Chemical mapping of a 170-nucleotide RNA with DMS and 2A3.
[RMDB]
RNA sequence: GGGAACGACUCGAGUAGAGUCGAAAAGCUCCGCCUCGAGUUCCUCCGCUUUCUUUCUUCCACUCACCCACUUCUCGAGAAUAUCUUCUCUUCCAUCGCGCUUCUUCUUCGAUUCGGAUCGGCUCAUAAAGCCCUCAGUUCGCUGAGGGCAAAAGAAACAACAACAACAAC
Reactivity to DMS in 0.01 (KOAc 150mM, MgCl2 10mM, bicine 150mM(pH8.5), 24C), signal-to-noise 4, nucleotides 027 to 129: g020c000u000c000c050g030c120c010u000c030g020a010g000u030u010c000c000u040c080c060g040c120u040u050u020c000u010u010u000c050u050u000c010c060a060c000u010c060a190c060c030c010a100c070u000u000c030u020c060g040a110g030a070a070u050a140u060c090u030u000c000u010c000u000u000c000c000a090u050c030g000c000g030c100u020u000c060u010u030c030u000u020c030g020a130u040u040c000g030g000a100u030c060g010g090c000u010c070a070u050a060a090a150
Reactivity to 2A3 in 0.01 (KOAc 150mM, MgCl2 10mM, bicine 150mM(pH8.5), 24C), signal-to-noise 6, nucleotides 027 to 129: g010c010u020c010c020g060c010c010u010c010g020a010g010u040u030c000c000u020c010c030g010c000u040u110u000c020u020u050u010c010u060u000c030c010a040c020u040c020a050c020c030c000a030c030u070u040c030u030c020g050a070g040a060a040u110a070u110c070u080u000c020u000c000u070u000c030c020a090u030c020g000c000g020c030u020u020c000u020u010c000u030u010c030g110a130u020u040c020g000g040a020u000c010g010g030c020u020c030a050u140a060a060a030

Record summary
Conditions: 150 mM KOAc, 10 mM MgCl2 and 150 mM bicine (pH 8.5), 24 C. DMS adducts were read by reverse transcription with MarathonRT.